About this RNA:
This 177-nucleotide RNA was probed chemically with DMS and 2A3. The 2A3 profile rests on 2,931 reads. 2A3 adducts were read by reverse transcription with SuperScript II with manganese. The reactions ran in a buffer of 150 mM KOAc, 10 mM MgCl2 and 150 mM bicine (pH 8.5), at 24 C.
RNA sequence: GGGAACGACUCGAGUAGAGUCGAAAAGACACCGCGCAGAUCCCAAUGGCGGCUAAUAACGCCAAAAUAUAUGCGCGUAAAUGGCGUAAAAUAUAGACACAAUAUAAGUGAAAGCCGCCAAAGCAAAACUACAGAACAAAUUCGUUUGUUCUGUAGUAAAAGAAACAACAACAACAAC
Reactivity to DMS in 0.01 (KOAc 150mM, MgCl2 10mM, bicine 150mM(pH8.5), 24C), signal-to-noise 3, nucleotides 027 to 126: g010a150c120a090c200c020g000c010g030c000a080g000a090u000c010c010c010a150a300u000g000g010c010g000g030c030u010a030a100u000a150a050c010g020c000c000a000a030a070a060u000a120u000a070u000g000c020g010c000g010u000a030a200a100u000g000g000c010g010u000a070a040a090a060u000a090u000a150g000a200c050a010c030a060a110u020a090u010a120a080g000u000g000a110a240a060g010c010c000g050c010c020a000a030a150g020c090a060a060a120
Reactivity to 2A3 in 0.01 (KOAc 150mM, MgCl2 10mM, bicine 150mM(pH8.5), 24C), signal-to-noise 2, nucleotides 027 to 126: g010a010c020a010c110c040g000c000g000c000a020g050a120u010c010c000c000a000a040u060g010g000c010g000g020c020u120a210a100u070a170a030c000g000c020c000a100a000a120a000u090a010u020a010u060g000c010g000c000g000u010a010a030a040u020g000g000c010g000u030a030a090a200a000u300a060u040a070g130a050c000a000c010a160a020u170a060u080a300a090g040u000g080a190a070a000g010c000c030g000c000c000a020a010a000g020c010a090a050a050